[RMDB]
RNA sequence: GGGAACGACUCGAGUAGAGUCGAAAACUGUGCGUGUCUACUGGGCACAUAGCUCUCCCCUGACAAGGGCUCCUGCUUUGACAGCCUGAUAGCAGAGGCAAAUAUCAAUGGCUUGCCCAAAUGCCUGCUGCUAGGCAUGCUAGGCAGUUACUGACAACGCAAAGAUUUUGUUCGCAAAAUCUUUGCGAAAAGAAACAACAACAACAAC
Reactivity to 2A3 in 0.01 (KOAc 150mM, MgCl2 10mM, bicine 150mM(pH8.5), 24C), signal-to-noise 1, nucleotides 027 to 156: c020u030g020u140g020c040g010u000g000u010c020u110a180c120u210g000g000g000c030a020c030a230u130a020g030c040u000c110u080c060c000c050c020u070g010a030c140a170a110g040g000g070c040u060c020c000u050g040c000u100u060u100g090a100c050a010g000c030c010u070g040a110u190a010g000c000a000g010a000g080g000c010a050a140a110u250a070u080c130a050a090u020g030g000c020u130u180g020c010c000c010a020a110a000u010g010c000c000u120g110c000u000g000c000u050a000g000g080c000a070u060g000c000u000a050g010g100c000a000g020u030u050a060c100u060g050a030c040a100a010

This 207-nucleotide RNA was probed chemically with 2A3. 2A3 adducts were read by reverse transcription with SuperScript II with manganese. For 2A3, 560 sequencing reads were counted. The RNA was probed in 150 mM KOAc, 10 mM MgCl2 and 150 mM bicine (pH 8.5) at 24 C. It was measured as part of the RMDB library OK3TST.